RNA sequence: GGGAACGACUCGAGUAGAGUCGAAAAGUUGAUAGCUACUAUUCUUAUUUGAUGCCUGUGCUCUCAAUGACCGAUUGUCUGGCCGCUGAGACACAUAGGGAUUGUGAUUUUAAUAAACCACUCAUUGUACCCUUCUUCUUCGGAAGAAGGAAAAGAAACAACAACAACAAC
Reactivity to DMS in 0.01 (KOAc 150mM, MgCl2 10mM, bicine 150mM(pH8.5), 24C), signal-to-noise 6, nucleotides 027 to 129: g040u060u040g030a100u030a080g030c090u040a020c000u010a090u000u000c000u040u080a120u020u020u030g020a000u070g000c000c000u000g040u000g030c300u010c030u030c020a020a030u000g050a070c030c020g040a150u070u070g020u060c160u070g010g010c000c000g070c000u020g020a000g020a000c160a080c040a060u050a090g090g020g030a060u000u000g010u050g040a080u040u040u020u050a050a040u080a060a060a090c040c040a030c050u000c090a090u000u040g030u060a070c140
Reactivity to 2A3 in 0.01 (KOAc 150mM, MgCl2 10mM, bicine 150mM(pH8.5), 24C), signal-to-noise 9, nucleotides 027 to 129: g080u070u070g080a100u110a050g050c050u080a040c010u020a090u070u040c030u110u100a210u150u120u200g080a050u070g110c010c010u020g000u010g020c040u000c000u010c000a030a030u030g010a050c010c000g080a140u090u240g140u160c140u100g020g000c020c020g000c010u000g000a000g000a010c000a000c010a040u110a040g000g000g020a010u010u010g030u010g070a080u000u060u080u130a140a120u120a050a050a010c020c020a030c030u040c020a100u030u090g030u100a100c000